An RNA of 177 nucleotides, treated with DMS and read out base by base. For DMS, 727 sequencing reads were counted. Reactivities are given for positions 27 through 126.
[RMDB]
RNA sequence: GGGAACGACUCGAGUAGAGUCGAAAAAGAAAGAGCGUAUUCGCGUCUUGACGUGAAUGAGCCUAGACUGUAGGCUGUAGUGGGAUAGUAACGCUCACUCCCAAAACGCUAUUCCACAGUCAGUUAAAAGCUUUUUGACUUUCGAGUCAAAAAGCUUAAAAGAAACAACAACAACAAC
Reactivity to DMS in 0.01 (KOAc 150mM, MgCl2 10mM, bicine 150mM(pH8.5), 24C), signal-to-noise 1, nucleotides 027 to 126: a120g020a120a120a070g000a010g010c020g030u010a090u000u000c010g000c000g000u030c080u030u060g010a020c010g000u000g000a030a010u000g000a030g030c010c000u030a090g000a100c110u000g010u000a040g030g000c010u000g010u000a030g050u000g000g000g000a000u020a000g000u000a100a120c050g010c000u010c000a110c160u010c010c000c010a060a060a060a090c180g010c000u000a010u010u000c000c020a020c000a170g010u010c060a040g030u000u000a110a090
The reactions ran in a buffer of 150 mM KOAc, 10 mM MgCl2 and 150 mM bicine (pH 8.5), at 24 C.